The record gives the reactivity of an RNA of 177 nucleotides to DMS and 2A3. The RNA was probed in 150 mM KOAc, 10 mM MgCl2 and 150 mM bicine (pH 8.5) at 24 C. Values are in units of 0.01, from 0 to 300, in steps of 10.
[RMDB]
RNA sequence: GGGAACGACUCGAGUAGAGUCGAAAAGCAUCCAGCCGUGUCACACGGGGACCUGAUCGCUGAUGGCCGGGCUGCCCUGUGACGUUUGCCAGGAGGAAACCAUCGUGAUUCCCCUCGGCACCGUGGGCCCUACCUAACGCUUCGGCGUUAGGUAGGGAAAAGAAACAACAACAACAAC
Reactivity to DMS in 0.01 (KOAc 150mM, MgCl2 10mM, bicine 150mM(pH8.5), 24C), signal-to-noise 2, nucleotides 027 to 126: g030c110a100u010c020c040a190g020c020c080g020u000g000u010c030a060c040a000c220g010g000g000g010a060c030c000u000g030a050u000c090g000c220u020g000a130u010g010g010c020c020g020g000g000c120u010g010c030c000c020u000g070u010g000a030c020g010u000u000u000g040c000c010a040g000g000a120g010g010a040a000a100c010c050a120u020c280g000u020g020a140u010u000c000c000c000c010u000c070g010g000c000a020c300c080g010u010g000g000g010
Reactivity to 2A3 in 0.01 (KOAc 150mM, MgCl2 10mM, bicine 150mM(pH8.5), 24C), signal-to-noise 3, nucleotides 027 to 126: g050c010a100u010c020c010a000g040c030c020g130u100g050u090c030a020c010a060c200g000g000g020g000a020c000c020u030g080a090u130c090g000c150u210g140a270u280g120g000c020c000g000g000g000c010u090g180c000c000c000u050g000u020g010a000c010g040u050u080u070g010c040c000a030g000g060a140g030g010a090a040a050c040c000a190u200c150g090u140g090a100u030u040c020c000c000c000u030c080g020g010c000a010c040c000g060u050g020g050g000